[RMDB]
About this RNA: Chemical mapping of a 177-nucleotide RNA with 2A3 and DMS. The 2A3 profile rests on 4,116 reads.
RNA sequence: GGGAACGACUCGAGUAGAGUCGAAAAGAUAUGGACUGCCCGGGAGGCAUCGAUCGUAUCUCGGAAACGAGAGUACGGGAGCCUCCUCAGUCCUAAGUCAAAACCCAGUUGGUUCGCCAACUGGGAACUCCUAAUGAGACUUCGGUCUCAUUAGGAGAAAAGAAACAACAACAACAAC
Reactivity to 2A3 in 0.01 (KOAc 150mM, MgCl2 10mM, bicine 150mM(pH8.5), 24C), signal-to-noise 2, nucleotides 027 to 126: g010a000u010a000u050g000g000a010c000u020g080c090c260c100g000g020g000a010g010g000c010a060u300c170g010a000u000c010g000u030a020u010c010u000c000g000g000a000a000a000c010g000a010g020a020g080u020a000c010g030g020g000a010g030c000c000u000c000c000u010c000a000g000u000c000c000u000a010a010g000u000c020a020a050a120a250c000c020c000a010g000u010u000g050g040u030u090c220g050c100c000a000a000c010u000g000g000g000a010a020
Reactivity to DMS in 0.01 (KOAc 150mM, MgCl2 10mM, bicine 150mM(pH8.5), 24C), signal-to-noise 2, nucleotides 027 to 126: g020a010u000a020u000g000g000a050c040u010g010c300c260c080g000g000g000a020g020g010c000a300u010c150g000a040u010c020g020u020a010u010c000u000c000g030g000a000a020a020c000g000a020g020a040g020u000a010c000g010g000g000a010g010c000c000u000c000c000u000c000a000g000u000c000c000u000a000a060g000u010c010a100a050a080a180c000c000c000a030g020u000u000g000g000u000u000c200g000c020c000a000a000c010u010g000g020g010a000a030
Description
The RNA was probed in 150 mM KOAc, 10 mM MgCl2 and 150 mM bicine (pH 8.5) at 24 C. DMS adducts were read by reverse transcription with MarathonRT.